[RMDB]
Chemical mapping of a 177-nucleotide RNA with DMS and 2A3.
RNA sequence: GGGAACGACUCGAGUAGAGUCGAAAAGAAGGGGCGGGGGCCAGGCCUCCCGCUUCCGACAACCAUUGGAGCGCCUCGUGCUGGGCGGGCCUAAAACUACAUUUCCCAAGGAUCACAGCAGGCACUAUUGUGCCUGAACUUUCGAGUUCAGGCACAAAAAAGAAACAACAACAACAAC
Reactivity to DMS in 0.01 (KOAc 150mM, MgCl2 10mM, bicine 150mM(pH8.5), 24C), signal-to-noise 3, nucleotides 027 to 126: g010a150a190g010g020g000g000c010g020g000g020g000g000c010c130a110g020g010c080c000u000c000c000c000g010c000u010u030c000c000g020a300c140a100a090c080c080a200u050u010g010g000a050g040c050g020c010c010u000c050g020u000g020c010u000g000g000g000c030g020g010g000c000c030u000a020a050a060a060c170u000a120c140a090u030u000u010c000c000c000a070a160g000g000a080u000c060a140c090a150g000c040a030g010g010c030a020c050u020a150
Reactivity to 2A3 in 0.01 (KOAc 150mM, MgCl2 10mM, bicine 150mM(pH8.5), 24C), signal-to-noise 3, nucleotides 027 to 126: g030a060a090g000g030g000g000c000g000g020g010g000g000c020c090a120g090g120c030c020u020c000c000c000g010c000u220u020c000c010g000a000c030a040a050c020c050a040u040u120g010g010a050g020c020g030c010c020u050c010g050u040g000c030u020g000g000g000c010g010g150g000c000c000u080a080a060a030a050c060u100a020c020a150u020u000u010c010c030c020a030a020g140g000a050u180c100a040c030a110g070c030a050g000g030c010a020c020u020a070

About this RNA
Source: RMDB libraries RFM100 and RFMREP, as collected in RNAgym. For DMS the reverse transcriptase was MarathonRT.